[RMDB]
RNA sequence: GGGAACGACUCGAGUAGAGUCGAAAAUGCCUCACAUUGACAUCUGUCAGCACCCUCAGUCCCUUACAUCAUUCAUAACCAACAGACGUCCUUGUGGUUUCACACUGACCCAGCCCAAUUCUUAGUAAAACCGCUUCCAGUUGACACUGGUGCUGAACGCUCCGUAAAAUUUCGAUUUUACGGAGCGAAAAGAAACAACAACAACAAC
Reactivity to 2A3 in 0.01 (KOAc 150mM, MgCl2 10mM, bicine 150mM(pH8.5), 24C), signal-to-noise 3, nucleotides 027 to 156: u110g030c010c000u050c010a070c030a080u080u080g030a000c020a050u070c050u060g020u030c020a020g020c010a060c010c010c010u060c030a040g050u030c030c010c020u050u070a100c070a090u110c010a040u140u100c030a030u110a140a090c030c020a020a080c020a070g070a070c040g020u020c060c000u050u040g030u030g030g000u000u060u080c050a030c000a010c040u030g060a050c000c000c030a000g020c000c020c010a030a060u100u030c020u080u050a050g030u060a060a150a010a020c020c010g040c030u150u070c020c000a060g000u030u000g090a020c030a020c100u010g000g020u020g030c010u010g020a070a040
Reactivity to DMS in 0.01 (KOAc 150mM, MgCl2 10mM, bicine 150mM(pH8.5), 24C), signal-to-noise 1, nucleotides 027 to 156: u000g020c030c010u000c090a120c050a130u000u040g010a040c040a080u000c030u010g060u010c020a100g030c030a050c000c000c000u000c030a070g000u000c010c030c000u000u000a080c050a120u000c080a020u030u000c070a140u000a070a180c030c020a060a090c000a080g000a030c040g020u010c010c040u000u000g000u000g000g000u000u000u010c050a090c080a080c040u000g030a070c020c030c020a130g040c060c030c000a030a110u000u000c050u000u010a100g010u000a030a060a050a080c030c020g040c030u000u000c020c070a050g030u000u000g000a150c110a110c040u020g000g020u000g020c030u010g000a050a290